[RMDB]
RNA sequence: GGGAACGACUCGAGUAGAGUCGAAAAUCAUUUAGCAGAUAAUUUGGGACCUAUGUCUACUUUUCAAGGCAAAGUGAAGAUGACAGUCCUUGCUCUCAGGGAGCCCCCACUUUAAUGGGAGACUGAUAAACUGGUAAUUAGACUGUGAUAAAUAGUACUAAUCAGUACCGUUCGCGGUACUGAUUAGAAAAGAAACAACAACAACAAC
Reactivity to 2A3 in 0.01 (KOAc 150mM, MgCl2 10mM, bicine 150mM(pH8.5), 24C), signal-to-noise 2, nucleotides 027 to 156: u050c010a010u050u110u130a040g020c010a010g010a070u010a110a080u130u110u110g000g000g000a020c040c040u040a100u080g000u000c000u020a060c060u050u090u110u130c080a150a120g140g010c080a110a100a070g030u060g040a100a030g060a100u060g010a000c040a010g000u000c000c000u030u040g000c010u000c000u000c050a070g120g210g040a080g060c000c000c020c000c010a070c040u170u170u090a120a060u070g020g020g020a020g010a000c000u030g060a080u100a100a090a030c050u040g010g000u020a040a000u010u020a070g120a110c030u030g030u060g100a030u130a090a040a070u110a070g000u030a090
Reactivity to DMS in 0.01 (KOAc 150mM, MgCl2 10mM, bicine 150mM(pH8.5), 24C), signal-to-noise 1, nucleotides 027 to 156: u000c060a120u000u010u000a200g030c070a060g030a050u000a060a100u000u000u000g050g020g010a090c050c030u000a180u010g000u000c000u000a110c040u000u000u000u000c090a100a190g040g020c160a040a080a110g010u010g010a070a070g030a100u010g060a080c050a090g000u010c010c020u000u000g040c100u010c050u000c010a030g010g000g020a090g010c050c030c020c030c040a080c120u010u000u000a100a170u010g000g020g010a060g000a080c040u000g000a070u000a030a040a080c040u010g030g000u000a070a020u000u010a110g040a120c020u000g000u000g030a110u010a060a060a140u000a080g000u010a040
An RNA of 207 nucleotides, treated with 2A3 and DMS and read out base by base.
Conditions: 150 mM KOAc, 10 mM MgCl2 and 150 mM bicine (pH 8.5), 24 C.
It was measured as part of the RMDB library OK3TST.